An RNA of 177 nucleotides, treated with DMS and 2A3 and read out base by base. For DMS, 2,836 sequencing reads were counted. For 2A3 the reverse transcriptase was SuperScript II with manganese. For 2A3, 1,659 sequencing reads were counted. Conditions: 150 mM KOAc, 10 mM MgCl2 and 150 mM bicine (pH 8.5), 24 C. DMS adducts were read by reverse transcription with MarathonRT.
[RMDB]
RNA sequence: GGGAACGACUCGAGUAGAGUCGAAAAUACUCAUGGGAAGUCGGCACAACUCCCGACUCGCGGGGAGGUCCGCAGUGUAGCUUUUUGGUCGGAGCUGUUGUGCGGACGUCGAGUAACAGCUAGCCAACAUAGUCGCCAUUUUCGAAUGGCGACUAUGAAAAGAAACAACAACAACAAC
Reactivity to DMS in 0.01 (KOAc 150mM, MgCl2 10mM, bicine 150mM(pH8.5), 24C), signal-to-noise 1, nucleotides 027 to 126: u000a030c010u000c010a130u070g000g010g020a030a080g000u000c020g000g020c010a000c000a050a000c030u000c050c000c010g000a020c000u000c180g000c020g000g020g000g020a140g000g000u000c000c000g030c010a160g020u040g040u010a080g000c080u000u010u010u010u010g000g010u010c000g000g000a070g000c050u010g010u000u000g000u010g000c000g000g040a040c000g000u000c080g000a050g030u000a020a120c120a090g000c090u010a100g000c080c010a070a220
Reactivity to 2A3 in 0.01 (KOAc 150mM, MgCl2 10mM, bicine 150mM(pH8.5), 24C), signal-to-noise 1, nucleotides 027 to 126: u040a020c000u000c000a030u060g090g000g000a050a030g070u010c080g070g000c020a000c000a020a010c010u020c010c000c000g020a030c010u060c060g080c000g000g010g000g070a200g070g090u230c000c000g000c000a000g030u040g010u110a010g000c090u110u050u000u020u010g010g000u030c000g000g000a000g000c000u000g020u020u040g000u000g010c000g010g000a000c000g000u060c040g000a000g000u000a060a010c020a000g020c030u000a000g040c000c000a040a070